Chemical mapping of a 177-nucleotide RNA with 2A3 and DMS. For DMS the reverse transcriptase was MarathonRT. Values cover nucleotides 27 to 126. The RNA was probed in 150 mM KOAc, 10 mM MgCl2 and 150 mM bicine (pH 8.5) at 24 C. 2A3 is a SHAPE reagent: it acylates the 2'-hydroxyl of flexible nucleotides of all four kinds. For DMS, 1,168 sequencing reads were counted. 2A3 adducts were read by reverse transcription with SuperScript II with manganese.
[RMDB]
RNA sequence: GGGAACGACUCGAGUAGAGUCGAAAAGAUAUGGACUAGCAAUAGGGAGCUUGGAGGCAGCGAAGAACGCUCUCGGAAACGAGAGCGGGAGCUGUGAAGAGCGAAGAACUAUUGCUAGUCCUAAGUCCGUGACAUAAAUGUUCGCAUUUAUGUCACGAAAAGAAACAACAACAACAAC
Reactivity to 2A3 in 0.01 (KOAc 150mM, MgCl2 10mM, bicine 150mM(pH8.5), 24C), signal-to-noise 1, nucleotides 027 to 126: g070a020u160a130u290g030g000a000c000u000a000g000c030a010a030u000a010g010g000g070a050g000c020u000u010g050g010a080g300g080c000a010g000c030g120a300a000g020a090a020c020g000c000u010c010u020c000g030g010a150a100a050c020g000a000g000a000g000c000g000g020g000a020g000c000u050g020u160g030a040a020g000a000g030c050g140a130a040g010a040a000c010u000a010u000u040g000c030u000a000g000u000c000c000u000a010a070g000u000c010
Reactivity to DMS in 0.01 (KOAc 150mM, MgCl2 10mM, bicine 150mM(pH8.5), 24C), signal-to-noise 2, nucleotides 027 to 126: g000a070u010a300u030g020g000a020c000u000a010g010c000a040a000u000a010g000g000g000a170g080c000u000u040g030g000a290g010g000c010a000g010c000g040a160a200g070a160a170c000g030c000u000c010u030c000g010g000a130a050a180c000g000a030g010a030g000c000g000g000g000a090g000c000u010g010u000g000a300a260g000a030g000c030g000a110a170g010a120a250c000u000a010u000u010g000c010u010a010g010u020c000c000u000a020a060g020u000c050